[RMDB]
RNA sequence: GGGAACGACUCGAGUAGAGUCGAAAAUUCGGCACGCAGCCGCUGGCUGGCCGCGAGAAUAGAGUUUCCGGUGAGCACCGAACCGACCAUCACCGCGUCCACCGGCGAACCCAACACCGCACUGGCCCGAUCGGAGAAUAUUCGUAUUCUCCGAUCGAAAAGAAACAACAACAACAAC
Reactivity to 2A3 in 0.01 (KOAc 150mM, MgCl2 10mM, bicine 150mM(pH8.5), 24C), signal-to-noise 6, nucleotides 027 to 126: u080u030c020g010g010c040a020c090g080c050a040g040c030c010g050c070u050g020g000c020u020g020g000c010c020g030c050g020a100g070a100a160u200a080g100a030g060u040u060u030c060c000g010g020u070g060a080g020c080a030c030c040g020a050a010c030c020g050a030c030c000a040u100c020a010c040c000g010c010g010u010c000c010a040c020c000g000g010c030g010a040a030c020c000c000a030a010c040a010c030c010g010c020a040c060u060g050g000c000c010
Reactivity to DMS in 0.01 (KOAc 150mM, MgCl2 10mM, bicine 150mM(pH8.5), 24C), signal-to-noise 3, nucleotides 027 to 126: u040u000c030g040g020c070a110c080g020c100a090g000c030c000g010c040u000g000g000c160u020g000g000c040c040g010c080g000a050g020a130a110u010a080g020a110g000u020u000u010c080c000g010g050u000g000a180g000c080a070c060c020g010a040a060c080c080g000a110c080c070a100u000c020a070c060c020g000c100g000u010c010c020a060c010c020g000g000c090g020a060a180c010c020c020a050a080c060a040c040c010g030c060a060c040u010g000g010c020c030